[RMDB]
RNA sequence: GGGAACGACUCGAGUAGAGUCGAAAAGUGCCGGCAAUACAGUGUGUAUGGAGGUCUGAAUGGCUCGGAAGUGCCAGCAAACCGGCGUAGAUAUUAGCAGACGUAUGGGCGUAAGACUUUUAUUGAAAAAAGUACAUAAGCUUCGGCUUAUGUACAAGAUAAUAAGCUUGUUCGCAAGCUUAUUAUCAAAAGAAACAACAACAACAAC
Reactivity to DMS in 0.01 (KOAc 150mM, MgCl2 10mM, bicine 150mM(pH8.5), 24C), signal-to-noise 3, nucleotides 027 to 156: g020u000g030c020c000g000g040c050a110a100u000a080c040a110g030u000g010u000g020u010a070u000g000g010a100g010g020u000c030u000g000a110a100u000g010g020c010u000c000g020g030a150a170g030u000g020c010c020a050g000c030a030a110a070c020c020g010g020c030g020u000a070g010a090u000a070u000u010a120g020c020a110g000a100c050g020u000a080u000g020g030g010c010g010u000a100a110g000a100c040u000u000u000u030a100u000u060g010a000a080a050a080a100a150g010u000a020c000a020u000a010a010g000c010u000u020c300g050g010c000u000u000a000u010g010u000a000c010a020a030
Reactivity to 2A3 in 0.01 (KOAc 150mM, MgCl2 10mM, bicine 150mM(pH8.5), 24C), signal-to-noise 5, nucleotides 027 to 156: g040u030g000c010c010g030g030c040a030a060u090a070c040a050g110u060g010u030g020u210a050u060g020g020a030g010g020u000c030u020g040a140a080u050g020g000c030u030c070g030g080a110a030g030u020g060c020c000a020g050c030a040a040a050c020c000g000g000c000g010u040a020g050a080u040a050u170u160a030g000c030a010g000a070c030g040u070a050u100g040g080g000c020g020u040a060a010g040a040c000u050u100u080u140a170u100u140g020a050a050a040a010a020a040g000u000a000c000a000u000a000a000g000c000u030u090c190g070g000c000u010u000a000u000g000u000a000c000a000a000